[RMDB]
RNA sequence: GGGAACGACUCGAGUAGAGUCGAAAAUGAAGUAUUUAAGCCGCAUACUAAAAACGAAGCAGAUGAAAUAUUUAUAGCGGGUACUGCUAAAACUACGCCAGCAAUUUGUGACAUAUCAGAAGAAUGGGCAUAUAAGGCCUUUCGAGGCCUUAUAUGCAAAAGAAACAACAACAACAAC
Reactivity to 2A3 in 0.01 (KOAc 150mM, MgCl2 10mM, bicine 150mM(pH8.5), 24C), signal-to-noise 2, nucleotides 027 to 126: u230g020a050a030g050u070a070u020u100u040a080a120g010c000c090g000c000a090u060a090c050u180a040a020a090a090a090c090g060a060a000g100c030a010g030a040u020g050a130a090a000u280a080u030u160u060a210u130a040g040c020g000g000g030u020a030c000u000g000c020u050a120a000a000a000c130u170a050c070g040c030c010a040g060c020a040a070u040u130u190g070u050g010a010c010a020u050a130u100c070a040g100a210a020g020a160a040u090g140g100
Reactivity to DMS in 0.01 (KOAc 150mM, MgCl2 10mM, bicine 150mM(pH8.5), 24C), signal-to-noise 1, nucleotides 027 to 126: u070g000a130a060g030u000a030u030u000u010a060a070g010c040c080g020c070a110u000a020c090u030a020a030a160a040a110c130g000a130a050g000c040a040g000a100u030g010a130a030a090u040a060u030u030u000a010u030a070g000c080g060g000g000u000a040c030u060g040c060u030a000a050a070a080c090u000a030c040g000c090c000a020g000c220a050a030u000u000u020g060u040g000a110c060a030u020a040u000c100a030g040a060a080g000a140a080u000g000g000